Chemical mapping of a 207-nucleotide RNA with 2A3 and DMS. For 2A3, 16,416 sequencing reads were counted. It was measured as part of the RMDB library M2RFPK. For DMS, 3,640 sequencing reads were counted.

RNA sequence: GGGAACGACUCGAGUAGAGUCGAAAAUAGCGAAGUAGGAUUUUAUGCGUCAAGUGUUCACAGGCUGGGGAGUGGCCGUGAAACGAAAAGCAGAAAGCGUGCUGCUUACGAUAUAAUUUCCGCACCCAUAAGAAGUCUCUGUUCGCAGAGACUUCAAGAUAACUAGACUCUUCGGAGUCUAGUUAUCAAAAGAAACAACAACAACAAC
Reactivity to 2A3 in 0.01 (KOAc 150mM, MgCl2 10mM, bicine 150mM(pH8.5), 24C), signal-to-noise 6, nucleotides 027 to 156: u160a030g050c050g060a110a010g060u100a060g040g000a020u010u010u010u020a010u030g010c000g010u030c090a050a050g020u040g030u150u010c010a010c080a110g010g000c010u060g020g030g020g030a090g060u100g000g000c000c000g000u010g000a030a010a000c010g010a000a020a030a000g000c010a000g070a090a130a020g180c120g080u150g040c010u000g000c000u000u010a010c010g010a010u000a000u000a060a020u010u000u000c000c000g000c020a030c000c010c000a030u090a100a070g010a000a000g000u000c000u000c000u010g040u050u080c200g000c050a000g000a000g000a000c000u000u000c000a000a000
Reactivity to DMS in 0.01 (KOAc 150mM, MgCl2 10mM, bicine 150mM(pH8.5), 24C), signal-to-noise 2, nucleotides 027 to 156: u010a040g020c060g040a050a080g030u010a080g030g050a050u000u000u000u000a030u000g000c010g010u000c110a030a180g020u010g020u010u000c000a040c030a070g040g010c010u010g000g000g000g010a170g040u010g030g010c020c000g000u000g010a010a030a060c050g000a300a030a060a030g000c000a030g020a070a040a210g020c260g000u000g000c000u000g020c020u000u000a010c010g020a120u000a040u010a020a120u000u000u000c030c010g040c070a110c010c000c020a110u000a050a150g000a010a010g000u010c000u000c000u010g000u000u000c270g050c000a030g010a020g010a010c000u000u000c010a020a090